[RMDB]
RNA sequence: GGGAACGACUCGAGUAGAGUCGAAAAUGGCUCUGCUAGGGCGUCCAAUGCUGCCGCGAAGAGUUCGUCUCUGAUUGCCUUGAGGUAGCCGGGCUCGAAUAGGUGGGCUCGCGGCGAUGCGCAGGAAAGAGCAAAACAGUGAACUGGGCGUGUGCUGCCACUCCAUCUACUUCGGUAGAUGGAGUGGAAAAGAAACAACAACAACAAC
Reactivity to 2A3 in 0.01 (KOAc 150mM, MgCl2 10mM, bicine 150mM(pH8.5), 24C), signal-to-noise 1, nucleotides 027 to 156: u140g000g000c000u000c000u000g000c030u010a040g000g000g000c020g010u040c000c010a000a040u150g000c050u090g000c000c000g030c020g010a110a090g020a090g050u090u090c030g110u100c000u020c020u070g040a040u000u160g020c010c060u040u180g120a020g050g040u070a000g010c040c040g030g040g000c000u010c050g040a110a030u110a100g070g020u160g040g030g010c030u030c100g000c000g000g000c000g120a170u150g010c060g010c010a000g020g100a100a080a110g060a020g030c060a000a060a010a140c130a040g040u080g150a040a080c000u050g030g000g000c010g000u060g060u070g010c000u020g010
Structure probing data (2A3) for a 207-nucleotide construct. Reactivities are rounded to 0.1 and cut off at 0 and 3. Values cover nucleotides 27 to 156. 2A3 adducts were read by reverse transcription with SuperScript II with manganese. Conditions: 150 mM KOAc, 10 mM MgCl2 and 150 mM bicine (pH 8.5), 24 C.